[RMDB]
The record gives the reactivity of an RNA of 177 nucleotides to DMS. Source: RMDB library OK2TRN, as collected in RNAgym. Values cover nucleotides 27 to 126. Conditions: 150 mM KOAc, 10 mM MgCl2 and 150 mM bicine (pH 8.5), 24 C.
RNA sequence: GGGAACGACUCGAGUAGAGUCGAAAAGUUCUUGGCAGCCUUUAAAUGCCUAGGCAGAGAGGAAGAGAGAGGUUCCUAAGCUUCAUGGUGAAUUUCUAAGUCUGUGUUGACUGCAGGAAAUGUAUGACAGCCCAAAAGAUUUCGAUCUUUUGGGCUGAAAAGAAACAACAACAACAAC
Reactivity to DMS in 0.01 (KOAc 150mM, MgCl2 10mM, bicine 150mM(pH8.5), 24C), signal-to-noise 1, nucleotides 027 to 126: g010u000u000c030u000u000g020g000c120a090g000c040c050u000u000u000a060a030a120u010g000c030c020u000a070g020g060c010a100g020a140g000a050g000g010a110a030g010a140g020a040g030a050g000g000u000u000c020c010u010a080a110g010c090u000u010c070a030u030g010g020u000g020a140a060u000u000u000c040u000a140a050g000u000c030u000g000u000g000u010u020g010a020c030u000g000c140a100g000g010a000a040a060u010g000u000a050u000g000a270